[RMDB]
Source: RMDB library TTRDES, as collected in RNAgym. The record gives the reactivity of an RNA of 177 nucleotides to DMS and 2A3. For 2A3 the reverse transcriptase was SuperScript II with manganese. The reactions ran in a buffer of 150 mM KOAc, 10 mM MgCl2 and 150 mM bicine (pH 8.5), at 24 C. Values cover nucleotides 27 to 126. Values are in units of 0.01, from 0 to 300, in steps of 10.
RNA sequence: GGGAACGACUCGAGUAGAGUCGAAAAGAUAUGGAGCAUUAGGGAGAACCUAUCGGAAACGAUAGAAGUUCAUCGAUCUAAAUGCUCCUAAGUCAAAAGUCGCGAGUACGUUCGCGUACUCGCGACAGUAUGAACCCUAGUUCGCUAGGGUUCAUACAAAAGAAACAACAACAACAAC
Reactivity to DMS in 0.01 (KOAc 150mM, MgCl2 10mM, bicine 150mM(pH8.5), 24C), signal-to-noise 2, nucleotides 027 to 126: g000a000u000a010u000g000g000a040g020c020a000u000u000a010g000g010g010a010g010a030a000c020c000u000a000u000c000g030g020a020a010a000c000g000a010u000a010g010a130a180g000u010u000c000a300u000c260g000a070u000c010u000a010a050a030u010g020c000u000c010c000u000a000a070g000u000c000a130a120a120a120g000u010c000g030c010g000a040g030u000a000c010g000u000u010c230g010c010g050u020a000c000u000c000g030c010g000a000c000a030
Reactivity to 2A3 in 0.01 (KOAc 150mM, MgCl2 10mM, bicine 150mM(pH8.5), 24C), signal-to-noise 2, nucleotides 027 to 126: g010a000u000a010u060g010g000a010g010c010a020u000u020a020g000g020g000a030g010a010a020c000c000u010a010u020c010g010g010a000a020a010c020g010a000u020a020g040a240a090g000u000u020c080a130u300c040g000a000u000c000u010a170a210a150u010g000c000u000c000c000u000a000a000g000u000c000a040a000a050a290g000u000c010g000c030g000a010g000u000a020c020g050u040u100c220g010c010g100u000a010c000u000c010g030c000g010a000c000a000